[RMDB]
RNA sequence: GGGAACGACUCGAGUAGAGUCGAAAAGCCUCAGUGACCACCUGAAGCAGAGAGGAUUAAGAAAACCUUCCUUUAACUACAAUCUCGUAAGACACACACACAAACCUGCUCUUACCAGGAAUAAACAGGUAUUUACCAUGUUCGCAUGGUAAAUACCAAAAGAAACAACAACAACAAC
Reactivity to 2A3 in 0.01 (KOAc 150mM, MgCl2 10mM, bicine 150mM(pH8.5), 24C), signal-to-noise 9, nucleotides 027 to 126: g020c010c000u010c020a050g020u050g130a060c010c010a010c000c030u030g020a060a010g030c060a000g050a010g000a010g130g020a040u130u170a140a060g090a080a140a040a040c010c000u050u080c020c000u060u090u100a120a110c060u140a040c080a050a110u030c010u010c070g030u040a050a010g070a030c020a000c000a000c000a000c000a000c040a110a090a070c020c010u040g030c030u030c010u050u030a060c010c030a010g030g120a050a070u160a120a090a020c060a020
Reactivity to DMS in 0.01 (KOAc 150mM, MgCl2 10mM, bicine 150mM(pH8.5), 24C), signal-to-noise 2, nucleotides 027 to 126: g000c010c000u020c070a070g000u020g010a080c020c110a050c070c020u000g020a140a060g000c060a060g000a070g000a040g010g000a090u010u050a070a090g010a140a060a060a130c030c030u000u000c020c000u000u000u030a040a120c080u030a090c180a130a130u010c020u020c040g050u010a050a030g010a110c110a020c030a000c080a020c070a040c080a060a010a070c020c010u000g000c000u000c010u020u000a070c000c050a080g000g000a060a050u010a090a110a090c290a050